About this RNA:
Structure probing data (DMS and 2A3) for a 207-nucleotide construct. For DMS the reverse transcriptase was MarathonRT. DMS (dimethyl sulfate) methylates the pairing face of unpaired adenines and cytosines. The DMS profile rests on 1,944 reads.
RNA sequence: GGGAACGACUCGAGUAGAGUCGAAAACUAUGUUUCGACAUAGAAGCCUUCCUAAGUCAUCUGAGGCGAAAGACAUGCGUUCACUCGGAAACGAGUGGACGCAACAGCUUUCGCUCCCCACCAGAUGAUAUGGAUACGAGUUUAGUUCGCUAAACAAAGAGUAAGGUCAAUUCGUUGACCUUACUCUAAAAGAAACAACAACAACAAC
Reactivity to DMS in 0.01 (KOAc 150mM, MgCl2 10mM, bicine 150mM(pH8.5), 24C), signal-to-noise 2, nucleotides 027 to 156: c030u000a030u000g000u000u000u030c150g020a110c040a090u000a160g000a080a140g030c060c060u000u030c000c020u040a090a240g000u000c010a010u000c010u030g010a300g000g040c000g000a020a000a000g000a090c080a300u000g010c000g010u000u000c010a010c000u000c020g000g000a180a090a190c010g010a010g080u000g000g010a000c010g030c010a000a000c010a220g050c010u000u000u000c020g050c040u030c260c040c040c020a300c190c040a010g030a020u000g020a060u000a250u000g000g000a080u000a030c040g000a180g000u000u000u030a080g010u000u030c120g070c030u000a060a050a040c060a060a060
Reactivity to 2A3 in 0.01 (KOAc 150mM, MgCl2 10mM, bicine 150mM(pH8.5), 24C), signal-to-noise 3, nucleotides 027 to 156: c010u020a020u040g030u000u160u080c200g100a020c010a010u020a030g110a140a060g130c010c040u000u020c010c000u080a150a080g000u000c000a000u000c010u010g010a010g030g020c000g010a000a000a000g030a040c040a080u040g000c000g000u000u000c000a000c000u010c010g070g010a150a100a050c030g010a000g000u000g000g000a000c000g010c000a000a000c000a000g000c010u000u020u000c000g000c000u070c000c000c020c000a030c010c010a000g000a010u000g000a010u010a040u060g000g000a040u080a230c230g050a100g080u010u010u020a030g010u030u040c160g020c290u050a040a010a010c070a010a150
For 2A3, 2,989 sequencing reads were counted. For 2A3 the reverse transcriptase was SuperScript II with manganese.